[RMDB]
Annotation
This 207-nucleotide RNA was probed chemically with DMS and 2A3. Source: RMDB library RNAMAK, as collected in RNAgym. The RNA was probed in 150 mM KOAc, 10 mM MgCl2 and 150 mM bicine (pH 8.5) at 24 C.
RNA sequence: GGGAACGACUCGAGUAGAGUCGAAAAGAGCCCUUUCGAGGGCUCAAAAAAGCGUACUACUCGGGAGCACGAGGAUCUGUAAGUGGGUCCCAAAUAGGACCCACUGAGGGGAGUGCGUUGAUCGAGUAUCGCAAAAAGGAGGAGUUCGCUCCUCCAAGUUAUACAAGCGUUUCGACGCUUGUAUAACAAAAGAAACAACAACAACAAC
Reactivity to DMS in 0.01 (KOAc 150mM, MgCl2 10mM, bicine 150mM(pH8.5), 24C), signal-to-noise 1, nucleotides 027 to 156: g000a000g020c000c000c010u000u000u010c170g020a010g030g010g000c000u020c000a000a000a040a100a090a080g000c050g010u000a060c160u000a020c000u020c000g000g000g020a060g010c000a030c000g000a120g080g020a040u010c070u000g000u020a270a080g010u010g000g010g000u010c000c000c000a060a110a230u000a030g000g010a080c000c000c000a010c020u000g000a300g000g020g010g000a080g050u010g000c040g010u000u000g010a120u000c020g000a090g000u000a030u020c040g010c020a070a060a070a120a100g000g010a000g000g000a090g010u000u000c190g000c000u000c000c000u010c000c000a000a180
Reactivity to 2A3 in 0.01 (KOAc 150mM, MgCl2 10mM, bicine 150mM(pH8.5), 24C), signal-to-noise 1, nucleotides 027 to 156: g000a000g010c010c010c000u030u030u070c170g060a040g000g000g000c000u020c010a020a000a000a010a000a020g040c060g000u100a090c070u010a000c000u020c010g030g010g000a000g010c020a000c000g000a170g010g070a000u000c010u100g090u300a020a000g000u010g010g000g000u030c010c020c010a120a230a030u150a060g010g010a010c000c080c030a000c000u000g000a030g040g000g010g010a010g000u010g010c000g110u170u010g000a010u020c000g000a000g000u000a020u280c010g000c050a090a000a000a080a000g040g000a000g010g030a010g020u090u160c160g090c150u010c000c000u000c010c000a000a000

2A3 adducts were read by reverse transcription with SuperScript II with manganese.